Structure probing data (DMS and 2A3) for a 207-nucleotide construct. 2A3 adducts were read by reverse transcription with SuperScript II with manganese. Values cover nucleotides 27 to 156.
RNA sequence: GGGAACGACUCGAGUAGAGUCGAAAAGUAUUCACGCUUCGGCGUGAAUACAAAAACCGUAGGCGACCUCGGGCGAUAAGCUGUGGUUCGAAAGAGCCAUACAGCUUUUGACGCAUUCGCCUAAACGGAAAAAGAACUCCACUUCGGUGGAGUUCAAUCCAAACUCUAGAUUCGUCUAGAGUUUGGAAAAAGAAACAACAACAACAAC
Reactivity to DMS in 0.01 (KOAc 150mM, MgCl2 10mM, bicine 150mM(pH8.5), 24C), signal-to-noise 2, nucleotides 027 to 156: g020u010a030u000u000c010a020c000g050c000u000u010c300g050g000c020g030u000g000a010a010u000a000c010a030a030a060a140a130c000c000g020u000a030g010g020c000g020a040c160c100u000c080g000g000g030c020g010a100u010a010a020g030c000u000g070u000g000g010u000u000c010g000a150a130a260g020a010g050c000c010a080u000a020c030a030g020c000u000u000u020u000g000a190c020g000c040a240u000u000c010g020c000c000u000a000a050a090c000g010g000a020a110a110a140a130g010a030a020c000u010c000c020a010c010u000u000c300g060g000u000g010g000a020g010u000u010c000a070a100
Reactivity to 2A3 in 0.01 (KOAc 150mM, MgCl2 10mM, bicine 150mM(pH8.5), 24C), signal-to-noise 2, nucleotides 027 to 156: g000u000a010u010u000c000a020c010g010c000u070u150c300g090g010c000g000u020g000a000a000u010a000c000a020a010a020a010a010c000c000g000u010a000g010g000c020g000a030c140c040u030c170g120g210g000c030g020a050u030a110a000g000c000u000g020u000g030g020u000u000c010g020a060a130a110g000a010g000c010c000a050u040a170c040a020g000c010u020u020u000u090g060a010c020g000c020a010u030u020c000g000c010c000u030a050a030a010c040g020g080a070a070a020a000a040g070a010a010c000u010c030c000a010c000u020u110c300g080g000u000g000g000a000g000u000u000c000a000a000